[RMDB]
RNA sequence: GGGAACGACUCGAGUAGAGUCGAAAAGCAGUAUCUCGUUAGGCGAGGCUCCUAUACAAACACAGGUUGCUGAUCUGACGACGUCGAGAGACGCCCAACAUUAGGACAGGAUAUAUCGAACCAAGGUGAACCUGUCCAGGGUUCGCCCUGGACAGAACGCUUGUAUGGUGUUCGCACCAUACAAGCGAAAAGAAACAACAACAACAAC
Reactivity to 2A3 in 0.01 (KOAc 150mM, MgCl2 10mM, bicine 150mM(pH8.5), 24C), signal-to-noise 2, nucleotides 027 to 156: g000c020a000g030u140a100u070c040u010c000g000u040u100a070g020g030c080g050a050g060g000c050u070c080c050u130a170u050a230c140a070a170a010c130a010c040a040g030g050u290u100g030c030u070g030a080u000c020u020g000a020c010g010a000c000g040u010c000g000a000g000a000g000a080c020g060c030c020c000a040a050c050a160u100u130a070g020g060a000c000a070g020g020a020u060a010u020a020u240c080g020a110a040c080c040a100a000g070g010u080g020a080a070c000c000u030g000u050c010c000a020g060g000g010u000u030c110g190c000c000c020u020g010g010a000c000a030g010a000a010
Background: Conditions: 150 mM KOAc, 10 mM MgCl2 and 150 mM bicine (pH 8.5), 24 C. Structure probing data (2A3) for a 207-nucleotide construct. It was measured as part of the RMDB library M2RFPK.